[RMDB]
RNA sequence: GGGAACGACUCGAGUAGAGUCGAAAAGAUCCUUUGCAGAUCUCUGGGAUGUCAUUCACUCAUGCUUCUAUGCUGGGUGACUCCUACCAUCAUCACAUUCUUCCAAUUCUCCCAGUAGGGUAUGCAGUUAUUCUUCACCAUUCGUGGUGAAGAAUAAAAAAGAAACAACAACAACAAC
Reactivity to 2A3 in 0.01 (KOAc 150mM, MgCl2 10mM, bicine 150mM(pH8.5), 24C), signal-to-noise 9, nucleotides 027 to 126: g050a090u040c010c000u050u040u100g010c030a020g010a090u010c020u000c010u030g020g000g010a050u100g100u140c060a130u090u030c000a010c010u020c010a040u300g010c020u210u170c050u220a070u300g000c010u010g000g010g000u000g010a000c010u030c000c000u030a080c040c010a050u090c010a030u080c010a010c010a110u090u050c030u090u020c040c010a080a170u100u020c020u020c020c000c000a040g050u160a030g040g010g020u030a030u030g010c010a010g010
Reactivity to DMS in 0.01 (KOAc 150mM, MgCl2 10mM, bicine 150mM(pH8.5), 24C), signal-to-noise 7, nucleotides 027 to 126: g010a090u010c010c010u000u030u010g020c030a050g000a130u030c010u000c030u010g000g000g010a040u020g010u020c180a080u000u000c010a010c020u000c010a020u050g020c030u000u030c210u010a030u030g020c070u000g000g000g010u000g000a030c200u000c030c020u000a080c080c050a050u010c040a050u010c070a060c070a090u000u000c050u010u010c020c040a060a140u020u010c080u000c010c020c000a040g010u030a030g000g000g010u010a070u000g000c030a050g000
Structure probing data (2A3 and DMS) for a 177-nucleotide construct. DMS adducts were read by reverse transcription with MarathonRT. Values are in units of 0.01, from 0 to 300, in steps of 10. The RNA was probed in 150 mM KOAc, 10 mM MgCl2 and 150 mM bicine (pH 8.5) at 24 C.